This 207-nucleotide RNA was probed chemically with 2A3. The RNA was probed in 150 mM KOAc, 10 mM MgCl2 and 150 mM bicine (pH 8.5) at 24 C. Reactivities are given for positions 27 through 156. 2A3 adducts were read by reverse transcription with SuperScript II with manganese.
RNA sequence: GGGAACGACUCGAGUAGAGUCGAAAAGCUCUGGAAUUGAGGCCCCUCUAACAAUAAUCCUAAACUACUUCGCAGAGUAAUCUGCCGAAUCGUAGGAUGCCCAUUACUAUCUAUUUUUGGAGCAUCUAAAACUGUCAGUGCUUCGGCACUGACAGAACUAUUUCGCUUCGUUCGCGAAGCGAAAUAGAAAAGAAACAACAACAACAAC
Reactivity to 2A3 in 0.01 (KOAc 150mM, MgCl2 10mM, bicine 150mM(pH8.5), 24C), signal-to-noise 1, nucleotides 027 to 156: g000c010u020c010u040g070g110a220a150u220u150g010a060g040g010c000c030c000c030u150c080u160a080a060c100a040a070u140a070a060u120c000c020u050a090a110a180c000u050a030c000u000u000c000g000c000a000g000a020g040u080a040a100u010c000u000g090c030c080g030a010a010u020c050g020u010a000g010g010a000u000g000c010c010c000a020u030u020a040c120u080a070u210c080u110a220u050u070u030u010u030g040g000a150g030c000a000u020c000u050a230a000a000a000c000u010g000u000c000a000g000u000g020c000u060u060c170g050g000c000a000c000u000g000a000c000a000g000a020a000